Source: RMDB library OK2TRN, as collected in RNAgym.
An RNA of 177 nucleotides, treated with 2A3 and DMS and read out base by base.
Conditions: 150 mM KOAc, 10 mM MgCl2 and 150 mM bicine (pH 8.5), 24 C.
For DMS the reverse transcriptase was MarathonRT.

RNA sequence: GGGAACGACUCGAGUAGAGUCGAAAAGAUGUUGCCAAUAGCUUGGUACGCUAUACUAGUGGUUGCAGUAUUUGCUUAUUCUCUAGGAGAUGGUUUUGAUUUAGGUUUGAGCACAAUCUAUUUCACCCCUAGGAUCUUAAUUCGUUAAGAUCCUAGGAAAAGAAACAACAACAACAAC
Reactivity to 2A3 in 0.01 (KOAc 150mM, MgCl2 10mM, bicine 150mM(pH8.5), 24C), signal-to-noise 7, nucleotides 027 to 126: g080a050u130g010u210u120g040c000c010a040a050u060a040g040c050u030u060g090g030u080a040c060g000c040u050a040u040a130c040u030a040g070u020g070g030u050u070g000c010a010g050u110a160u090u120u070g010c000u060u060a070u200u030c040u000c010u040a060g070g020a120g060a090u090g040g060u070u090u150u170g070a060u040u030u050a030g030g040u020u020u090g060a040g040c030a010c020a070a050u020c010u050a110u030u030u020c070a150c010c010
Reactivity to DMS in 0.01 (KOAc 150mM, MgCl2 10mM, bicine 150mM(pH8.5), 24C), signal-to-noise 9, nucleotides 027 to 126: g010a090u000g010u000u000g010c030c040a090a070u000a050g010c060u000u000g010g010u000a090c230g010c030u000a040u000a100c080u000a060g010u000g010g020u000u000g010c050a040g010u010a100u000u000u010g010c050u000u000a080u010u000c020u000c020u010a070g010g000a110g010a070u000g010g010u000u000u010u000g010a050u000u000u000a020g010g010u000u000u000g010a120g010c100a070c150a030a030u000c030u000a050u000u000u000c030a120c180c070